[RMDB]
RNA sequence: GGGAACGACUCGAGUAGAGUCGAAAACGUGUCCGUCGGCGUAGCCGACAACAUGCCCAGGUAGCCCAGACCUUCAAGGCUACGGUGCGUUGCGACGCACGGUCUGAUUCUUCACAUCGACGUUCACAAGAUCGGAUCACUUUCGAGUGAUCCGAAACAAGUGCUUUGAAUUCGUUCAAAGCACUUGAAAAGAAACAACAACAACAAC
Reactivity to DMS in 0.01 (KOAc 150mM, MgCl2 10mM, bicine 150mM(pH8.5), 24C), signal-to-noise 1, nucleotides 027 to 156: c090g020u000g000u010c030c110g060u010c000g000g030c000g050u000a120g000c020c000g020a040c030a050a020c010a020u000g000c070c040c040a110g020g010u000a030g000c000c010c190a100g000a050c040c080u000u000c070a100a300g000g050c000u000a020c010g020g030u010g000c040g020u000u000g070c160g010a100c000g000c020a020c000g000g000u000c030u000g010a180u000u000c100u000u000c090a100c040a170u000c030g010a050c000g000u000u000c030a080c020a070a160g000a110u010c000g020g000a020u000c000a000c000u020u000u020c220g040a030g040u000g020a000u010c000c000g010a000a050a070
Reactivity to 2A3 in 0.01 (KOAc 150mM, MgCl2 10mM, bicine 150mM(pH8.5), 24C), signal-to-noise 4, nucleotides 027 to 156: c030g010u020g000u060c110c100g000u000c000g000g010c290g150u230a070g030c000c000g010a000c010a010a000c000a020u100g010c010c000c010a030g010g030u010a010g000c010c100c200a020g010a000c000c000u010u000c020a010a010g000g000c000u000a000c010g000g000u010g010c000g000u000u070g050c180g120a020c000g000c000a000c000g000g000u010c000u020g010a030u080u060c030u140u150c060a040c010a230u120c060g120a100c100g100u100u100c070a060c020a100a090g040a180u040c000g000g000a000u000c000a010c000u070u110u120c200g040a000g010u000g010a000u000c000c000g000a000a000a000